[RMDB]
RNA sequence: GGGAACGACUCGAGUAGAGUCGAAAAGAUAUGGAGCAGAGCAGCAUCGAUCAUGUCGGUCGGAAACGACCGCAUGGGAGCUGUCCUGCUCCUAAGUCAAAUCUCUCGCCGUUCGCGGCGAGAGAAACAAGAUGAGACACUUCGGUGUCUCAUCUUGAAAAGAAACAACAACAACAAC
Reactivity to DMS in 0.01 (KOAc 150mM, MgCl2 10mM, bicine 150mM(pH8.5), 24C), signal-to-noise 1, nucleotides 027 to 126: g010a010u000a230u010g020g030a020g000c000a040g150a080g030c000a020g010c000a300u010c210g000a070u000c010a010u000g010u010c010g020g020u020c010g000g000a050a060a180c010g000a010c000c000g010c020a000u000g000g010g000a040g020c000u000g000u010c030c010u000g010c000u000c000c000u000a020a030g000u020c020a070a110a270u020c010u010c000u010c000g030c000c000g050u000u000c240g020c000g000g030c000g000a000g000a010g000a010a030a130
Reactivity to 2A3 in 0.01 (KOAc 150mM, MgCl2 10mM, bicine 150mM(pH8.5), 24C), signal-to-noise 1, nucleotides 027 to 126: g010a000u030a010u120g000g000a000g050c020a000g060a020g040c000a000g000c020a170u300c160g190a120u050c020a010u070g300u300c080g020g000u000c020g000g020a060a040a030c000g000a010c000c000g040c000a020u000g000g050g030a040g010c000u000g020u090c000c000u000g000c010u020c020c000u000a000a000g000u000c010a080a030a120u020c000u020c000u000c000g030c010c000g030u110u130c300g040c030g140g020c050g000a000g000a000g000a020a000a000
This 177-nucleotide RNA was probed chemically with DMS and 2A3. Conditions: 150 mM KOAc, 10 mM MgCl2 and 150 mM bicine (pH 8.5), 24 C. For DMS the reverse transcriptase was MarathonRT. 2A3 adducts were read by reverse transcription with SuperScript II with manganese.